[RMDB]
About this RNA: An RNA of 207 nucleotides, treated with DMS and 2A3 and read out base by base. The data come from the RNA Mapping Database (RMDB), library RNAMAK. For DMS, 5,340 sequencing reads were counted.
RNA sequence: GGGAACGACUCGAGUAGAGUCGAAAACAGUCGUUCGCGACUGCAUUCUUCCUAAGUCAUAUGAGGAGCUAGGGAGACCUACAUCGGAAACGAUGUCGGUCUUUGAUCUAGCUCUACCCACCAUAUGAUAUGGAGCGCACCUACGUUCGCGUAGGAAUUUUAUGAUGGUGUUCGCACCAUCAUAAAAAAAAGAAACAACAACAACAAC
Reactivity to DMS in 0.01 (KOAc 150mM, MgCl2 10mM, bicine 150mM(pH8.5), 24C), signal-to-noise 3, nucleotides 027 to 156: c010a000g010u000c020g040u000u010c260g020c030g010a040c000u020g000c020a130u010u000c060u000u000c010c010u000a080a300g030u020c010a030u000a010u000g010a080g040g000a020g020c000u000a030g000g010g010a010g020a010c000c000u000a010c010a010u000c010g010g000a170a120a300c010g020a010u010g050u000c080g000g030u000c000u010u010u010g020a100u000c010u000a010g010c000u000c000u000a000c020c000c020a300c160c020a010u000a020u000g000a010u000a300u010g000g000a080g020c090g000c050a070c000c000u000a010c020g020u000u000c260g000c000g040u000a020g000g010a020a020
Reactivity to 2A3 in 0.01 (KOAc 150mM, MgCl2 10mM, bicine 150mM(pH8.5), 24C), signal-to-noise 2, nucleotides 027 to 156: c010a000g000u010c010g060u100u120c210g020c000g170a000c010u040g000c050a130u090u120c040u100u060c000c010u070a140a070g010u000c000a000u000a000u020g020a040g000g010a000g000c000u000a010g010g000g030a010g000a000c010c000u010a000c000a000u000c000g030g040a070a020a040c010g000a010u000g010u020c020g020g000u010c000u130u050u020g050a050u010c000u000a000g000c000u000c000u000a000c000c000c010a100c000c000a010u000a010u010g010a010u010a040u120g050g020a050g070c090g030c060a130c020c000u010a000c000g030u020u100c270g000c000g120u000a010g020g000a000a020